[RMDB]
RNA sequence: GGGAACGACUCGAGUAGAGUCGAAAAAGUAAUUGUGGUAGCGACUAGAAUGACUCUCCCUCACUCUACUCACUCCACAACAACCGAGCGGCUGCAGCUUCCGUCAUAAUAACUAUGCUCACUCAGUCGAGUCCAUCCUGGUGAGUGAGGGAUGGAGAAAUCCCUAUGAGUUCGCUCAUAGGGAUUUAAAAGAAACAACAACAACAAC
Reactivity to 2A3 in 0.01 (KOAc 150mM, MgCl2 10mM, bicine 150mM(pH8.5), 24C), signal-to-noise 2, nucleotides 027 to 156: a000g110u070a010a110u110u060g000u000g040g030u050a030g060c010g060a030c060u080a080g070a210a090u140g070a130c020u030c020u040c080c000c000u000c000a000c020u000c010u050a050c000u020c050a030c010u070c010c010a030c000a060a050c020a030a050c020c040g030a020g010c030g000g010c020u040g050c090a030g000c020u120u000c020c010g040u040c020a040u020a140a030u090a080a040c120u090a050u170g020c010u000c010a000c010u010c010a040g030u010c020g070a020g010u010c020c020a030u040c010c000u060g080g000u060g070a040g010u010g010a010g000g000g000a010u040g000g000a040g080
Reactivity to DMS in 0.01 (KOAc 150mM, MgCl2 10mM, bicine 150mM(pH8.5), 24C), signal-to-noise 2, nucleotides 027 to 156: a100g010u000a020a070u000u000g000u000g000g030u000a050g040c040g030a080c060u000a050g000a100a050u000g010a080c050u000c070u010c050c030c030u000c030a050c010u000c000u000a050c050u000c020a040c030u020c000c010a070c020a060a050c010a090a130c050c020g010a150g000c030g020g010c020u040g020c060a110g030c030u000u000c040c030g030u000c050a080u000a100a120u000a110a130c080u000a090u000g000c030u000c040a050c030u000c010a110g000u000c030g020a130g000u010c030c030a110u010c010c010u010g020g030u000g010a050g000u000g010a060g030g010g010a030u010g030g000a080g000
An RNA of 207 nucleotides, treated with 2A3 and DMS and read out base by base.
For DMS the reverse transcriptase was MarathonRT.
For 2A3, 1,166 sequencing reads were counted.
Values cover nucleotides 27 to 156.
DMS (dimethyl sulfate) methylates the pairing face of unpaired adenines and cytosines.
The DMS profile rests on 5,959 reads.